[RMDB]
RNA sequence: GGGAACGACUCGAGUAGAGUCGAAAACCGCAGUUGGCAAAGGAAACGUAGGGGCCACGCUCGAACAUGAUGAUUUCAGCGUCUUCGCUGAGUCGACGCGCACGAGCCGCCGCCGAGGCUCCACCUGGAAUCUAUGGUUGUUCGCAACCAUAGAUUCAAAAGAAACAACAACAACAAC
Reactivity to DMS in 0.01 (KOAc 150mM, MgCl2 10mM, bicine 150mM(pH8.5), 24C), signal-to-noise 2, nucleotides 027 to 126: c000c020g040c150a040g020u000u000g020g000c110a080a000a120g000g010a090a090a090c130g010u000a170g010g000g000g000c020c030a100c170g000c000u010c010g000a100a110c080a010u010g010a110u000g000a010u000u030u000c030a010g030c000g000u000c260u000u000c020g060c020u000g000a040g020u000c030g010a070c080g040c110g000c160a080c030g000a040g010c020c200g020c050c050g000c050c010g000a190g000g010c010u030c010c040a070c100c070u010g010
Reactivity to 2A3 in 0.01 (KOAc 150mM, MgCl2 10mM, bicine 150mM(pH8.5), 24C), signal-to-noise 2, nucleotides 027 to 126: c010c000g000c030a040g040u110u100g030g020c110a140a090a050g090g000a170a110a020c060g030u060a050g030g000g000g050c020c000a040c040g060c000u010c030g100a070a040c040a100u160g010a060u050g020a040u060u300u090c000a000g050c020g080u090c100u260u210c030g000c040u030g020a000g000u000c000g080a070c100g040c000g000c000a030c070g000a000g010c000c030g080c060c030g050c030c000g070a020g000g010c020u000c030c040a030c010c020u040g050